[RMDB]
RNA sequence: GGGAACGACUCGAGUAGAGUCGAAAAGAGACGAUCAAACCCGUUCUUGACCUUACUAAUUCCAUAGCAUAUCGGGUGGAAUGAAUAACAUGUUCUUUUGCUCUCUGCAUGGCGAUGCCACCAUGCGCAUACAUAUCCCAUUCGUGGGAUAUGUAUGAAAAGAAACAACAACAACAAC
Reactivity to 2A3 in 0.01 (KOAc 150mM, MgCl2 10mM, bicine 150mM(pH8.5), 24C), signal-to-noise 9, nucleotides 027 to 126: g020a000g010a010c050g010a040u100c130a050a050a080c010c020c010g030u080u030c030u050u090g100a120c010c000u050u110a070c040u130a090a100u090u010c030c010a050u070a070g080c040a070u110a120u270c090g070g030g000u030g010g040a060a050u090g050a070a040u150a130a070c110a130u180g050u070u030c010u020u080u050u070g030c020u010c000u000c040u090g000c000a010u010g010g000c040g140a100u160g080c030c000a010c000c000a010u020g000c010g000
Reactivity to DMS in 0.01 (KOAc 150mM, MgCl2 10mM, bicine 150mM(pH8.5), 24C), signal-to-noise 9, nucleotides 027 to 126: g000a060g010a050c050g010a060u000c090a070a090a130c170c060c010g010u000u010c030u000u000g010a120c060c050u000u000a070c120u000a120a090u000u000c030c020a040u000a080g010c090a080u000a080u010c110g010g010g020u000g000g000a040a030u000g010a080a060u010a060a090c180a080u010g010u000u000c020u000u000u000u000g010c130u000c060u000c060u010g020c010a010u000g000g010c070g010a100u010g010c090c050a140c010c000a010u000g000c020g010